Chemical mapping of a 207-nucleotide RNA with DMS and 2A3. In probing experiments dimethyl sulfate is read out at A N1 and C N3, which are open when not base-paired. It was measured as part of the RMDB library OK3TST.
RNA sequence: GGGAACGACUCGAGUAGAGUCGAAAAUGUAUGCAGAAGAAUUACUUGUAUUAACACUUUAAAGUAUACAAAGAUUAUCCACCACAUAGUGAUAUAUUUAGAUAACCUUGAUAGACUAAUCUGAAAGGAGGUGCUGAGUGUUAAUUCACAUGGAGCCUAUCCCUCUAGAAUUCGUUCUAGAGGGAUAAAAAGAAACAACAACAACAAC
Reactivity to DMS in 0.01 (KOAc 150mM, MgCl2 10mM, bicine 150mM(pH8.5), 24C), signal-to-noise 3, nucleotides 027 to 156: u010g000u000a070u000g000c060a160g000a140a160g020a140a110u010u000a090c020u000u010g020u000a080u000u000a010a040c010a030c020u000u000u000a050a040a070g010u000a050u000a090c040a100a100a050g010a070u000u010a040u000c000c010a060c090c060a070c150a100u000a090g030u000g010a140u000a060u000a110u000u000u000a030g000a060u000a060a010c020c010u010u010g010a140u010a060g000a100c110u000a060a080u010c060u010g010a080a110a160g030g010a110g000g020u000g030c020u000g000a040g020u000g010u010u000a040a070u000u010c040a050c040a070u000g000g010a110g020c080c110
Reactivity to 2A3 in 0.01 (KOAc 150mM, MgCl2 10mM, bicine 150mM(pH8.5), 24C), signal-to-noise 2, nucleotides 027 to 156: u140g010u060a040u100g040c050a020g040a190a040g030a050a120u210u060a120c050u080u040g000u040a060u020u060a090a010c000a000c040u090u120u130a130a190a050g020u040a030u000a130c020a030a110a010g030a010u000u090a020u040c030c010a030c080c000a040c100a130u140a020g030u030g090a000u010a000u020a040u090u080u020a040g010a070u060a030a050c020c000u050u040g020a080u070a050g030a060c020u050a070a100u050c020u030g050a020a010a020g050g000a030g000g020u020g000c040u030g000a000g020u000g000u020u000a000a040u060u060c030a020c000a040u110g090g010a010g130c110c000